[RMDB]
RNA sequence: GGGAACGACUCGAGUAGAGUCGAAAAAUGAGGCAUUGUGUGAUGCACUUAUGACAAAAUGCUUGUAUUUGGCAAGCUAUGAUGCUGCAUUUAAGGACACAAUACAUGUUAAGUAUAAAGAUCUUUGUUUGGAAAUACAGUAUAAAAUAACAAGUCCAAUGGCCUUCAUUUUCGAAUGAAGGCCAUUAAAAGAAACAACAACAACAAC
Reactivity to 2A3 in 0.01 (KOAc 150mM, MgCl2 10mM, bicine 150mM(pH8.5), 24C), signal-to-noise 3, nucleotides 027 to 156: a000u080g010a010g030g000c050a010u040u040g050u030g050u040g060a040u080g030c020a040c090u070u090a070u170g090a040c070a080a090a100a100u150g000c010u020u020g050u120a210u180u130u080g130g010c000a010a000g000c010u010a010u120g020a030u040g020c060u010g000c000a020u000u040u150a060a020g090g000a010c020a000c000a030a050u060a040c040a030u140g040u150u170a040a070g020u020a050u010a140a180a020g000a050u030c030u030u120u050g040u030u040u080g030g020a050a050a030u140a040c060a000g090u120a090u100a140a080a060a040u230a080a020c050a090a000g070u000c040c010
Reactivity to DMS in 0.01 (KOAc 150mM, MgCl2 10mM, bicine 150mM(pH8.5), 24C), signal-to-noise 2, nucleotides 027 to 156: a080u030g030a100g020g010c010a070u000u010g020u000g040u000g000a130u000g020c050a160c080u010u000a090u000g020a170c090a040a120a070a160u000g010c030u000u000g020u000a130u000u000u000g050g020c020a040a140g000c010u000a080u000g010a080u000g040c030u010g020c000a030u000u000u000a090a120g020g000a060c050a100c150a060a130u000a000c050a140u000g010u010u010a080a150g000u000a060u020a090a070a170g010a120u000c060u000u020u010g030u020u000u020g010g000a080a060a120u010a160c060a040g020u000a140u000a030a050a030a040u020a120a030c050a060a080g000u010c000c080